[RMDB]
RNA sequence: GGGAACGACUCGAGUAGAGUCGAAAAAGGGAUAGUUCGAGCUUGAGUUGCGAGUCGGGGGGAUCGUCCUCGUUAUCAACGUCAAAGCCAAUAAUAACUGGCAAAGAAAAACAAAACCUAGCUUUCGCUGCCUAAUAAGCAGUAGCAUAGCUGAUCCGCGAUUUACUAUCUUCGGAUAGUAAAUCGCAAAAGAAACAACAACAACAAC
Reactivity to 2A3 in 0.01 (KOAc 150mM, MgCl2 10mM, bicine 150mM(pH8.5), 24C), signal-to-noise 1, nucleotides 027 to 156: a000g100g000g030a040u060a010g030u080u100c080g040a030g040c030u080u050g040a040g040u090u040g050c050g000a050g010u090c040g010g010g010g000g010g050a110u260c020g130u130c000c000u000c020g000u020u010a040u040c010a010a010c000g040u000c040a020a010a020g000c000c010a010a000u180a080a050u060a040a030c040u000g000g000c000a020a110a000g070a090a100a060a000a000c040a000a130a000a030c010c010u060a010g020c000u000u010u000c010g000c000u000g000c000c000u060a100a040u130a170a010g000c010a000g000u030a040g030c090a050u000a010g020c000u000g080a130u070c070c040
Source information
The record gives the reactivity of an RNA of 207 nucleotides to 2A3. Reactivities are given for positions 27 through 156. The reactions ran in a buffer of 150 mM KOAc, 10 mM MgCl2 and 150 mM bicine (pH 8.5), at 24 C. High 2A3 reactivity points to a flexible backbone, as in loops and unpaired stretches.